RNA sequence: GGGAACGACUCGAGUAGAGUCGAAAAGUGGUCCCGCCUCUCCCGGUCGGUGAACCCUCUGGGCUUGGGUCUCCUCCCAGGUCCGGAAUCAGUCUCCAUGGCUUCCAUCCUGGGCCUCUUCUUCGGGUACGCUUUCGAUUCGUCGAAAGCAAAAGAAACAACAACAACAAC
Reactivity to DMS in 0.01 (KOAc 150mM, MgCl2 10mM, bicine 150mM(pH8.5), 24C), signal-to-noise 9, nucleotides 027 to 129: g020u000g000g020u040c000c030c030g040c050c000u020c000u030c000c010c010g000g000u030c080g000g060u020g000a110a090c030c050c060u020c030u010g000g010g010c030u000u000g010g010g020u020c160u070c120c090u040c000c000c040a020g020g040u040c000c000g010g000a020a030u060c140a050g020u000c000u040c070c050a100u040g000g000c070u050u030c010c000a120u040c060c030u000g000g000g000c100c000u030c020u010u000c020u040u040c040g010g020g040u030a040c140
Reactivity to 2A3 in 0.01 (KOAc 150mM, MgCl2 10mM, bicine 150mM(pH8.5), 24C), signal-to-noise 9, nucleotides 027 to 129: g090u080g010g040u040c010c000c000g020c000c010u030c010u030c000c010c010g040g020u050c030g010g040u070g060a080a060c010c010c000u000c010u020g000g010g000c000u010u020g020g000g030u060c070u070c080c020u100c000c000c000a000g010g000u000c010c000g000g010a010a050u110c020a020g050u010c010u000c050c040a080u100g020g000c000u090u010c030c020a080u050c000c030u030g010g010g000c000c010u020c000u090u010c000u030u040c010g030g000g020u040a060c090